[RMDB]
Record summary
Structure probing data (2A3 and DMS) for a 177-nucleotide construct. For 2A3 the reverse transcriptase was SuperScript II with manganese. For 2A3, 1,755 sequencing reads were counted.
RNA sequence: GGGAACGACUCGAGUAGAGUCGAAAACCAAAGCCCGGACCGGAACACCAACAAGCACCGGCCAGCGAGAACGCAGAUCGGUCAUACAAAAAAUUUCGGAUGUACGCGCAGAGCAGGAGGCUCUGCGGAAAGAUUCGCUUUUCGAAGCGAAUCUUUCAAAAGAAACAACAACAACAAC
Reactivity to 2A3 in 0.01 (KOAc 150mM, MgCl2 10mM, bicine 150mM(pH8.5), 24C), signal-to-noise 2, nucleotides 027 to 126: c020c000a060a050a000g070c020c040c030g030g040a020c020c000g000g050a060a050c020a010c070c000a090a100c060a100a030g080c080a020c020c020g050g000c030c020a000g000c000g010a070g080a150a020c040g000c030a030g020a110u060c020g010g000u010c050a040u100a160c140a060a100a010a020a030a060u110u090u090c040g050g020a060u080g040u140a050c080g000c010g000c060a000g000a010g000c050a080g050g270a040g140g000c000u010c000u010g000c010g000
Reactivity to DMS in 0.01 (KOAc 150mM, MgCl2 10mM, bicine 150mM(pH8.5), 24C), signal-to-noise 2, nucleotides 027 to 126: c000c000a060a110a150g010c040c060c000g010g000a090c040c020g010g010a070a100c030a040c070c060a020a110c120a110a090g030c110a070c020c020g000g020c080c000a090g000c000g010a100g000a090a140c020g000c000a010g000a040u020c000g000g040u010c090a080u050a070c150a000a000a070a100a160a160u040u010u010c090g010g000a170u000g030u010a020c140g000c030g040c000a040g020a000g000c000a090g020g010a080g070g020c000u000c000u040g000c000g000